[RMDB]
RNA sequence: GGGAACGACUCGAGUAGAGUCGAAAAAUACACCAGCAGUAGGAAUCAGCGACCGUCACAACAAGGUUGUGCUGGUAUCCGACGGUCGUAUAGCCCUGUCUUGCAGGUUGCCUUGCACUGACGUGCCACACCAUUUACAGAUUCGUCUGUAAAUGAAGAACAGAGAACAGUUCGCUGUUCUCUGUUCAAAAGAAACAACAACAACAAC
Reactivity to 2A3 in 0.01 (KOAc 150mM, MgCl2 10mM, bicine 150mM(pH8.5), 24C), signal-to-noise 4, nucleotides 027 to 156: a000u110a010c050a010c020c000a000g020c000a020g070u150a050g010g090a090a100u140c050a030g000c010g000a000c010c000g020u030c030a050c050a240a110c070a200a120g040g020u030u030g050u110g040c040u020g030g000u020a080u030c030c050g000a000c000g000g000u010c000g000u040a050u110a120g020c000c000c020u040g010u040c060u050u100g000c020a020g040g000u090u130g070c040c030u030u050g010c000a030c070u080g030a030c070g040u050g060c040c040a110c010a030c020c000a000u010u000u000a000c000a000g010a020u020u110c150g090u000c090u000g010u010a000a000a000u020g000a030a020
Reactivity to DMS in 0.01 (KOAc 150mM, MgCl2 10mM, bicine 150mM(pH8.5), 24C), signal-to-noise 2, nucleotides 027 to 156: a090u000a130c050a150c040c010a050g050c030a100g040u000a050g010g020a120a080u020c070a160g000c000g020a000c020c000g040u010c030a280c060a070a100c070a070a130g010g010u000u000g000u000g010c010u000g020g030u000a050u000c060c040g000a030c000g030g000u000c030g010u010a070u000a140g010c070c010c000u010g000u000c050u010u010g010c010a150g000g010u010u010g020c000c110u000u000g000c020a060c040u020g020a110c140g000u010g000c030c070a100c040a130c090c000a020u000u000u000a020c000a020g000a080u010u000c300g020u010c010u000g010u000a000a000a000u000g020a020a100
This 207-nucleotide RNA was probed chemically with 2A3 and DMS. For 2A3, 3,822 sequencing reads were counted. The reactions ran in a buffer of 150 mM KOAc, 10 mM MgCl2 and 150 mM bicine (pH 8.5), at 24 C. For DMS, 4,546 sequencing reads were counted. For DMS the reverse transcriptase was MarathonRT. 2A3 adducts were read by reverse transcription with SuperScript II with manganese.